RNA sequence: GGGAACGACUCGAGUAGAGUCGAAAAUACAAAGGGUUCCAAAUCGGGGAUGUACGAACCAAUGGGCGGCCUAGGAGCAGAUACCGACAGAGUACGGUCUACAAGGACGGUUCUGGCGAAUUCGUCCCGUUGGACGUUUUUUCGAAAACGUCCAACGAAAAGAAACAACAACAACAAC
Reactivity to 2A3 in 0.01 (KOAc 150mM, MgCl2 10mM, bicine 150mM(pH8.5), 24C), signal-to-noise 4, nucleotides 027 to 126: u240a050c080a010a140a050g050g000g010u030u050c050c000a060a060a080u150c060g070g000g000g030a040u040g070u150a050c080g020a050a020c000c000a010a060u100g010g010g000c010g000g020c000c000u070a050g030g010a010g000c010a020g030a050u080a110c010c030g030a000c030a030g110a010g050u080a130c040g020g010u000c010u020a080c040a140a040g050g000a010c030g000g000u020u000c000u030g080g030c080g030a020a020u130u150c000g050u020c000c020
Reactivity to DMS in 0.01 (KOAc 150mM, MgCl2 10mM, bicine 150mM(pH8.5), 24C), signal-to-noise 3, nucleotides 027 to 126: u010a080c150a060a050a090g000g010g000u000u000c020c080a080a100a100u030c060g020g010g000g000a050u010g010u030a030c140g000a120a080c010c020a050a080u020g000g000g030c020g020g040c050c020u000a100g000g010a080g000c030a070g020a110u030a050c050c000g000a070c090a090g030a090g010u010a040c040g010g000u010c030u010a060c170a090a130g010g010a000c020g010g000u000u030c030u000g030g030c130g000a030a060u000u000c000g010u000c010c020

Chemical mapping of a 177-nucleotide RNA with 2A3 and DMS. For DMS the reverse transcriptase was MarathonRT. The reactions ran in a buffer of 150 mM KOAc, 10 mM MgCl2 and 150 mM bicine (pH 8.5), at 24 C. As a SHAPE reagent, 2A3 marks flexible, mostly unpaired nucleotides at the ribose 2'-OH.